[RMDB]
RNA sequence: GGGAACGACUCGAGUAGAGUCGAAAAUGCGAAUCAGGCGACACAUCCAAAUUGCGGGAAACUCCUUAGAGCUCUAGCUACCGCGGCCCCAUCGUGAGAUUAGGGUGCAGCACCAGGUUAAUGGCCUCGGGUAUGGUAAAAACGCUAGAGAUUGGACCAGUAAUUCCUAGUUCGCUAGGAAUUACUGAAAAGAAACAACAACAACAAC
Reactivity to DMS in 0.01 (KOAc 150mM, MgCl2 10mM, bicine 150mM(pH8.5), 24C), signal-to-noise 2, nucleotides 027 to 156: u000g020c020g010a060a070u010c070a100g000g030c050g020a140c020a030c070a060u000c070c010a060a080a100u000u010g000c020g010g030g000a150a060a170c070u010c030c060u000u000a170g020a170g000c010u000c000u000a000g010c010u000a060c000c010g010c000g030g000c010c000c010c050a020u010c010g000u000g000a300g000a080u000u000a070g000g020g030u000g010c000a040g030c030a040c000c040a000g000g000u010u010a080a120u010g010g040c020c010u010c150g020g020g020u010a030u010g010g050u000a090a050a050a040a070c040g020c020u000a000g020a040g030a140u000u010g000g000a170c130
Reactivity to 2A3 in 0.01 (KOAc 150mM, MgCl2 10mM, bicine 150mM(pH8.5), 24C), signal-to-noise 4, nucleotides 027 to 156: u110g010c020g030a030a060u070c030a080g060g040c020g080a010c010a000c000a120u040c020c000a060a080a110u130u130g020c070g000g020g030a060a080a060c050u070c020c000u070u090a100g020a040g150c010u000c000u000a000g000c000u000a000c000c000g000c000g000g000c000c000c010c020a010u010c020g060u050g090a110g000a050u040u150a160g010g000g000u030g020c000a000g010c000a010c010c000a000g030g000u040u060a110a070u160g030g000c020c000u010c150g030g000g010u120a300u090g000g000u010a000a020a000a030a000c010g000c000u000a000g000a000g000a010u030u080g020g010a020c040